[RMDB]
Structure probing data (DMS) for a 177-nucleotide construct. Reactivities are rounded to 0.1 and cut off at 0 and 3. For DMS, 2,345 sequencing reads were counted. The reactions ran in a buffer of 150 mM KOAc, 10 mM MgCl2 and 150 mM bicine (pH 8.5), at 24 C.

RNA sequence: GGGAACGACUCGAGUAGAGUCGAAAAGAUAUGGAGGUCGAUAGGGAGUAAAAUGCAAGACUCUAGGUGUCGGAAACGACAUGCUAGAGUCUUGCAUUUUACUUUGAUCUAUCAGACCUCCUAAGUCCGAAUAUUACGACUUCGGUCGUAAUAUUCGAAAAGAAACAACAACAACAAC
Reactivity to DMS in 0.01 (KOAc 150mM, MgCl2 10mM, bicine 150mM(pH8.5), 24C), signal-to-noise 2, nucleotides 027 to 126: g000a130u000a300u000g000g010a010g030g000u000c000g010a030u000a010g010g010g010a020g000u000a000a010a020a010u010g000c000a010a000g000a030c000u000c000u000a010g000g020u000g010u000c000g010g000a140a070a260c010g010a020c000a010u000g020c020u030a010g020a000g000u000c000u000u000g010c000a010u000u000u010u000a010c000u010u010u010g010a090u020c000u000a000u000c000a140g020a010c010c010u000c000c000u000a010a050g000u000c060